[RMDB]
RNA sequence: GGGAACGACUCGAGUAGAGUCGAAAAGAGUUCAGAUUCAUGACUGCUAACAAUCUAACUGCACCUAGAAAUUCUUGGGAGGCUAUGGCUCUGAACUUUAAGUUAAUAGGUAUUGGCGGUACACCUUCAAACCCCUCCUUCGGGAGGGGUAAAAGAAACAACAACAACAAC
Reactivity to 2A3 in 0.01 (KOAc 150mM, MgCl2 10mM, bicine 150mM(pH8.5), 24C), signal-to-noise 2, nucleotides 027 to 129: g010a000g000u060u010c020a000g000a020u050u030c000a000u000g130a060c030u030g080c010u160a100a000c040a080a010u020c010u050a010a110c080u080g060c070a000c010c010u020a000g020a030a200a010u130u040c050u030u020g000g000g000a040g000g000c040u050a030u010g000g000c000u030c010u000g000a000a000c000u020u040u000a060a000g000u010u050a100a000u080a130g000g070u010a040u030u060g030g000c000g000g050u000a010c030a040c110c000u050u040c020a030a030
Reactivity to DMS in 0.01 (KOAc 150mM, MgCl2 10mM, bicine 150mM(pH8.5), 24C), signal-to-noise 1, nucleotides 027 to 129: g050a000g000u040u000c000a090g000a020u030u000c030a050u030g010a090c000u010g000c010u000a090a070c150a010a140u000c060u020a040a150c090u020g030c250a000c140c120u060a000g000a070a060a070u030u000c240u000u010g000g010g050a080g000g060c110u010a040u050g000g020c030u010c000u050g010a030a040c010u000u110u000a000a000g000u000u090a040a170u090a000g030g000u000a040u000u000g010g060c050g050g060u040a100c050a000c010c030u000u040c230a000a000

The record gives the reactivity of an RNA of 170 nucleotides to 2A3 and DMS. The DMS profile rests on 5,988 reads. For 2A3, 2,812 sequencing reads were counted. Source: RMDB library 15KLIB, as collected in RNAgym. Values cover nucleotides 27 to 129. The RNA was probed in 150 mM KOAc, 10 mM MgCl2 and 150 mM bicine (pH 8.5) at 24 C.